[RMDB]
RNA sequence: GGGAACGACUCGAGUAGAGUCGAAAAAAAGUGCAGCUCGGUGAGUACAUUUUCGAGCGCAUUGAUUAUAGUGAUGCUGUAUCCUACAAGUCUAGUACAACGUAUAAACUGACUGUAGGUGACAUCUCGUACCUAGAAUCUUCGGAUUCUAGGUACGAAAAGAAACAACAACAACAAC
Reactivity to DMS in 0.01 (KOAc 150mM, MgCl2 10mM, bicine 150mM(pH8.5), 24C), signal-to-noise 1, nucleotides 027 to 126: a060a000a090g000u000g000c000a090g020c000u020c000g000g000u000g000a100g010u010a070c260a110u000u000u000u000c000g000a030g010c010g020c000a000u000u000g010a220u000u000a110u000a060g030u010g020a030u000g020c060u000g010u000a060u000c010c000u000a010c000a050a080g000u000c010u020a080g010u000a020c260a050a140c300g000u000a090u010a040a070a110c120u010g000a040c020u010g000u000a010g010g000u000g000a120c030a020u000c030u000
Reactivity to 2A3 in 0.01 (KOAc 150mM, MgCl2 10mM, bicine 150mM(pH8.5), 24C), signal-to-noise 2, nucleotides 027 to 126: a000a000a000g000u000g030c000a020g000c010u000c000g040g000u040g020a030g050u100a120c030a160u060u000u030u000c010g000a000g000c000g000c000a000u000u060g080a050u050u190a110u040a130g140u070g020a050u010g030c110u050g050u100a020u000c010c000u000a020c010a180a110g010u000c040u220a000g010u020a050c040a140a040c160g110u190a050u050a180a110a000c020u000g010a010c000u000g000u000a000g000g000u000g000a000c000a010u000c010u000
Annotation:
An RNA of 177 nucleotides, treated with DMS and 2A3 and read out base by base. For 2A3 the reverse transcriptase was SuperScript II with manganese. The DMS profile rests on 772 reads. The 2A3 profile rests on 1,401 reads. The RNA was probed in 150 mM KOAc, 10 mM MgCl2 and 150 mM bicine (pH 8.5) at 24 C.